[RMDB]
Chemical mapping of a 177-nucleotide RNA with 2A3 and DMS. DMS adducts were read by reverse transcription with MarathonRT. For 2A3, 1,345 sequencing reads were counted. Source: RMDB library OK2TST, as collected in RNAgym.
RNA sequence: GGGAACGACUCGAGUAGAGUCGAAAACAAAACCUGUACGCUGCGCAUAAAACUGGCACCCGAUGGUAUGUUACUGGAUAUCAAACCUGAAGGUGGCGAUCCCGCACUUUGUCAGGCUGCGUUGGCAUACUGAUAGCGAGUUCGCUCGCUAUCAGUAAAAAGAAACAACAACAACAAC
Reactivity to 2A3 in 0.01 (KOAc 150mM, MgCl2 10mM, bicine 150mM(pH8.5), 24C), signal-to-noise 1, nucleotides 027 to 126: c010a000a100a000a080c000c010u050g030u060a020c080g000c020u040g000c050g020c040a020u150a160a140a050a080c030u000g030g010c000a020c000c010c030g030a020u010g010g010u040a040u040g000u000u050a040c050u080g150g080a110u040a010u070c040a060a040a060c010c010u080g020a010a010g000g000u030g000g010c020g030a060u090c030c020c000g060c010a090c070u190u110u070g030u050c000a030g030g020c030u020g000c010g090u140u210g080g000c000a080
Reactivity to DMS in 0.01 (KOAc 150mM, MgCl2 10mM, bicine 150mM(pH8.5), 24C), signal-to-noise 2, nucleotides 027 to 126: c080a120a120a090a130c030c010u000g000u020a040c090g010c060u010g000c020g060c060a050u010a040a050a130a130c100u000g000g020c020a060c020c000c010g010a150u000g000g010u000a030u000g000u000u000a070c050u010g000g000a280u000a030u000c010a000a070a060c020c030u000g020a180a030g000g000u000g020g030c050g000a080u010c050c060c000g020c040a050c100u000u010u000g030u000c000a000g000g010c070u010g000c110g000u000u010g010g000c050a100